[RMDB]
RNA sequence: GGGAACGACUCGAGUAGAGUCGAAAAUCUAACUCAUUCGUGAGUUAGAGUGUGCGCAGCGACCAUUGGGCCGGUGGCGCGCUGUCGGUGCCGCGCGUGGCGAUAGUGCUUGCUUCGGCAAGCACAAUCUCUGUCUCAGUUUCGACUGAGACAGAGAAAAAGAAACAACAACAACAAC
Reactivity to DMS in 0.01 (KOAc 150mM, MgCl2 10mM, bicine 150mM(pH8.5), 24C), signal-to-noise 2, nucleotides 027 to 126: u000c000u000a000a000c010u000c000a040u000u010c200g020u000g020a010g000u000u000a000g010a040g010u000g020u000g020c080g010c030a070g030c010g010a100c030c030a150u010u000g020g010g010c040c020g020g020u000g000g000c060g010c040g000c050u000g010u000c040g000g020u000g030c050c030g010c090g000c100g020u010g000g010c070g010a140u010a110g010u000g000c000u000u000g010c000u000u010c200g030g010c000a000a010g010c000a000c010a030a080
Reactivity to 2A3 in 0.01 (KOAc 150mM, MgCl2 10mM, bicine 150mM(pH8.5), 24C), signal-to-noise 2, nucleotides 027 to 126: u000c000u000a010a000c000u000c010a050u100u080c140g120u030g000a000g010u010u000a000g010a010g020u090g040u050g040c000g000c030a040g020c010g030a040c010c010a020u030u150g100g070g010c030c040g100g010u030g030g050c080g020c030g010c110u030g040u030c050g050g040u090g020c020c000g030c020g000c020g050u080g020g010c010g020a040u090a110g010u010g000c000u010u010g000c010u030u040c150g070g000c000a000a010g000c000a000c000a000a020
An RNA of 177 nucleotides, treated with DMS and 2A3 and read out base by base. For DMS, 3,169 sequencing reads were counted. For 2A3 the reverse transcriptase was SuperScript II with manganese. DMS adducts were read by reverse transcription with MarathonRT. For 2A3, 2,372 sequencing reads were counted.